Source: RMDB library TTRDEL, as collected in RNAgym.
The record gives the reactivity of an RNA of 177 nucleotides to DMS and 2A3.
DMS adducts were read by reverse transcription with MarathonRT.
High DMS reactivity at an A or C suggests that its Watson-Crick edge is free.
The reactions ran in a buffer of 150 mM KOAc, 10 mM MgCl2 and 150 mM bicine (pH 8.5), at 24 C.
2A3 adducts were read by reverse transcription with SuperScript II with manganese.
For 2A3, 6,102 sequencing reads were counted.
RNA sequence: GGGAACGACUCGAGUAGAGUCGAAAAGAUAUGGAUAUUGACAUGCUAACGGAUCGGAAACGAUCCGAUUAGCAACAGCAAUCAUCCUAAGUCAAAACGAAUAGUCGUGUUCGCACGACUAUUCGAAGAAAUAGAUUCUCUUCGGAGAAUCUAUUUCAAAAGAAACAACAACAACAAC
Reactivity to DMS in 0.01 (KOAc 150mM, MgCl2 10mM, bicine 150mM(pH8.5), 24C), signal-to-noise 4, nucleotides 027 to 126: g000a030u010a300u000g000g010a000u000a010u000u000g000a070c070a240u000g000c010u000a000a010c000g010g000a010u000c000g020g010a130a030a170c000g020a000u000c010c000g000a030u000u000a000g030c010a020a050c230a230g000c000a020a000u000c190a000u000c000c000u010a070a110g010u000c040a070a070a080a220c010g010a010a000u010a000g000u000c000g040u000g010u000u010c200g040c010a010c010g010a010c000u000a000u000u000c000g000a070a070
Reactivity to 2A3 in 0.01 (KOAc 150mM, MgCl2 10mM, bicine 150mM(pH8.5), 24C), signal-to-noise 2, nucleotides 027 to 126: g030a000u060a020u110g010g000a020u010a020u020u040g050a140c080a100u080g000c010u010a000a010c000g000g010a000u010c000g070g000a120a040a040c010g000a010u000c020c000g000a020u010u000a000g000c000a000a000c010a010g040c000a010a020u040c020a000u000c080c010u060a110a050g070u060c030a000a020a060a150c020g010a010a000u000a000g000u000c020g010u020g040u080u110c300g060c090a000c000g000a000c000u000a000u000u000c000g000a000a010